[RMDB]
RNA sequence: GGGAACGACUCGAGUAGAGUCGAAAAGCGUACUACUGUUUCGGGUACAUGGGAGCUCCCUCCCUUGCAUCCCAAAUAGGAUGCACCGUUGGGAGCGAAGAACAUGUAUCUCUAGCGUGAACAGUAUCGCAAAGAUCAUCGCUUCGGCGAUGAUCAAUCUGAACUGUAGCUUCGGCUACAGUUCAGAAAAAGAAACAACAACAACAAC
Reactivity to 2A3 in 0.01 (KOAc 150mM, MgCl2 10mM, bicine 150mM(pH8.5), 24C), signal-to-noise 2, nucleotides 027 to 156: g010c010g020u060a120c040u000a010c010u010g010u030u010u020c010g040g000g020u000a000c000a010u000g000g010g020a010g000c000u000c020c000c000u010c010c030c010u010u000g000c010a000u030c040c030c010a150a300a120u300a110g000g020a010u000g010c100a010c010c030g030u020u000g000g020g010a010g010c000g040a160a000g020a000a000c000a010u000g010u050a020u000c070u000c060u140a100g120c090g230u200g110a000a000c060a020g000u010a020u300c000g000c000a100a000a000g000a000u010c000a000u000c010g000c050u050u150c300g070g020c000g000a000u000g000a000u000c000a000a040

Record summary:
The data come from the RNA Mapping Database (RMDB), library RNAMAK. Chemical mapping of a 207-nucleotide RNA with 2A3. The reactions ran in a buffer of 150 mM KOAc, 10 mM MgCl2 and 150 mM bicine (pH 8.5), at 24 C.